[RMDB]
Notes: Source: RMDB library OK3TST, as collected in RNAgym. Chemical mapping of a 207-nucleotide RNA with 2A3. The RNA was probed in 150 mM KOAc, 10 mM MgCl2 and 150 mM bicine (pH 8.5) at 24 C. Reactivities are given for positions 27 through 156.
RNA sequence: GGGAACGACUCGAGUAGAGUCGAAAAGGAACACGUGAAUUGACAUUAUAUUCAAAGCGGACAGCGUACCAGUAGGUCGAUUCAUCGCUUUGUUCAAAUUAUCGUUGGUGAUCAAUAGAGUUUUAUCUUUGAUUUCGUAUAUCAAAGGUCGAUUGUAGGAGAUAACGCAAUUCGUUGCGUUAUCUCCAAAAGAAACAACAACAACAAC
Reactivity to 2A3 in 0.01 (KOAc 150mM, MgCl2 10mM, bicine 150mM(pH8.5), 24C), signal-to-noise 1, nucleotides 027 to 156: g170g000a040a020c010a010c010g040u030g000a030a060u000u020g000a010c050a050u090u210a120u150a060u130u300c140a110a040a010g020c120g050g050a160c080a140g080c000g070u100a190c000c000a070g120u050a050g100g000u000c000g000a000u010u000c000a030u050c000g050c040u160u000u090g070u050u040c000a000a000a170u150u120a120u120c090g030u000u020g080g130u070g080a190u040c020a040a140u110a140g080a000g040u030u010u080u080a010u000c000u000u000u040g020a020u020u110u160c110g030u120a110u020a000u170c000a000a010a030g010g020u000c000g040a000u000u170g060u030a030